[RMDB]
RNA sequence: GGGAACGACUCGAGUAGAGUCGAAAACACCCGCCGACCGUGACGUGCGACUGAUUCUGAGCUAACGCACGCAGGGGGAACUCGAGCCCGGUGACCAGCUCGAGCGCGGCGCCGGGCGGGUGAGAUCCGUGCCAUCGCGAUUCGUCGCGAUGGCACGAAAAGAAACAACAACAACAAC
Reactivity to DMS in 0.01 (KOAc 150mM, MgCl2 10mM, bicine 150mM(pH8.5), 24C), signal-to-noise 2, nucleotides 027 to 126: c070a070c010c000c020g030c100c010g000a150c040c030g000u010g020a100c010g010u020g000c020g010a200c120u010g010a130u010u000c150u010g000a100g020c060u030a060a070c050g030c000a000c020g040c040a080g010g000g000g010g000a130a110c060u000c030g010a120g000c030c010c140g000g020u020g000a210c040c030a160g010c010u010c120g020a090g000c050g050c060g010g000c030g020c060c010g000g020g000c010g000g010g000u000g010a060g000a110u000c030
Reactivity to 2A3 in 0.01 (KOAc 150mM, MgCl2 10mM, bicine 150mM(pH8.5), 24C), signal-to-noise 2, nucleotides 027 to 126: c030a030c000c010c000g010c020c030g070a130c000c010g220u030g270a300c000g000u000g030c000g010a050c060u080g050a190u210u120c060u160g070a050g050c040u060a110a070c020g000c000a010c010g000c010a030g000g010g010g060g000a040a020c000u010c010g010a020g010c000c000c000g050g060u030g070a300c050c020a060g050c010u070c100g090a150g000c000g000c030g000g030c000g000c040c010g030g010g000c000g000g000g010u030g000a080g010a010u050c030